About this RNA:
The data come from the RNA Mapping Database (RMDB), library ARCHII. This 207-nucleotide RNA was probed chemically with 2A3. Values cover nucleotides 27 to 156.
RNA sequence: GGGAACGACUCGAGUAGAGUCGAAAAACCGAGCGUCGUGGCGGGCGCUUGUGAGUCAGCUUCUUGACGGUAGAUAAGUGUGGAUGGAGUGAGAGGAGGAGUCCUGUGUAUGUCGUCGUCUACGUCGACCGAGCGUCCGUGCCAAGCGCUACGUCACCACGGAGGUGAAGUUCGCUUCACCUCCGUGAAAAGAAACAACAACAACAAC
Reactivity to 2A3 in 0.01 (KOAc 150mM, MgCl2 10mM, bicine 150mM(pH8.5), 24C), signal-to-noise 1, nucleotides 027 to 156: a030c020c010g030a000g050c050g040u160c080g040u100g000g000c000g000g000g020c000g000c000u000u000g070u000g000a100g030u010c030a000g010c030u040u000c010u040u100g010a010c030g050g020u070a070g040a040u070a150a090g070u050g030u050g100g060a060u020g060g010a040g080u070g020a060g000a070g000g030a030g010g000a050g000u050c020c020u020g030u050g020u030a070u090g060u040c030g000u010c000g030u030c050u070a150c070g020u020c050g000a000c000c020g020a000g020c020g040u000c030c010g020u060g010c000c000a050a000g010c000g000c000u090a130c040g020u020c020a000c040